[RMDB]
RNA sequence: GGGAACGACUCGAGUAGAGUCGAAAAUGAAGAUCUGGCGCAGCUCAUCUACGACCUGAAAAACGUCAAUCCGGCAGCCGAUAUUUCGGUCAAGCUGGUGUCGGAAGUGGGCGUGGGCACGGUUGCACCUCCCCGUAUAGUUCGCUAUACGGGGAGGAAAAGAAACAACAACAACAAC
Reactivity to DMS in 0.01 (KOAc 150mM, MgCl2 10mM, bicine 150mM(pH8.5), 24C), signal-to-noise 3, nucleotides 027 to 126: u010g010a110a120g010a090u000c030u000g050g010c080g000c030a050g000c010u000c120a060u010c020u010a140c000g000a130c000c050u000g000a020a150a120a050a100c070g010u000c070a140a070u000c000c000g030g010c010a160g020c000c000g000a020u000a150u010u010u000c000g000g010u000c110a080a090g000c030u010g010g060u010g000u000c020g010g010a110a120g050u010g000g000g010c040g010u000g000g010g030c060a080c100g000g000u000u000g000c040a200
Reactivity to 2A3 in 0.01 (KOAc 150mM, MgCl2 10mM, bicine 150mM(pH8.5), 24C), signal-to-noise 3, nucleotides 027 to 126: u150g040a060a070g040a070u030c050u120g050g000c060g000c050a020g000c010u000c040a050u000c020u020a020c010g250a300c000c030u030g090a090a050a030a010a000c020g030u000c030a030a080u060c000c020g000g000c000a010g030c010c010g000a000u110a200u240u300u060c010g000g000u060c080a120a040g000c010u000g010g010u010g000u010c010g010g030a090a020g050u150g000g040g020c030g000u010g010g000g000c040a050c100g020g010u020u030g000c010a030

This 177-nucleotide RNA was probed chemically with DMS and 2A3. Source: RMDB library OK2TRN, as collected in RNAgym. Values cover nucleotides 27 to 126.